[RMDB]
RNA sequence: GGGAACGACUCGAGUAGAGUCGAAAAGAUAUGGACCCAGUUGGGAGUCCCAUUCGGAAACGAAUGAAGGACGUUGAUCAACGGGUCCUAAGUCAAAUCUCAGGGUAACGUUCGCGUUACCCUGAGAGACAACCUGAAUGUUCGCAUUCAGGUUGUCAAAAGAAACAACAACAACAAC
Reactivity to DMS in 0.01 (KOAc 150mM, MgCl2 10mM, bicine 150mM(pH8.5), 24C), signal-to-noise 2, nucleotides 027 to 126: g000a010u000a030u010g000g010a000c010c000c020a130g000u000u000g000g040g000a010g010u000c000c010c000a010u020u000c010g000g010a010a010a010c000g020a010a010u000g000a250a250g000g000a010c000g020u020u010g000a040u010c000a010a010c000g010g000g000u000c000c000u000a010a080g000u010c000a130a140a280u000c010u000c000a000g000g000g010u010a010a000c010g020u000u020c300g010c010g020u000u000a000c000c000c000u000g010a010g000a020
Reactivity to 2A3 in 0.01 (KOAc 150mM, MgCl2 10mM, bicine 150mM(pH8.5), 24C), signal-to-noise 3, nucleotides 027 to 126: g000a000u000a010u030g010g000a000c010c010c130a050g010u000u000g030g010g010a040g000u000c040c020c000a010u010u010c000g000g000a000a000a010c000g010a010a010u100g080a280a180g020g000a000c030g050u300u050g010a010u000c010a000a000c010g020g000g020u000c000c000u010a000a000g000u020c000a090a100a150u010c000u010c000a000g030g000g000u000a000a000c010g030u030u110c300g030c010g160u000u000a000c000c000c000u010g000a000g000a000
Structure probing data (DMS and 2A3) for a 177-nucleotide construct. The RNA was probed in 150 mM KOAc, 10 mM MgCl2 and 150 mM bicine (pH 8.5) at 24 C. The DMS profile rests on 4,223 reads.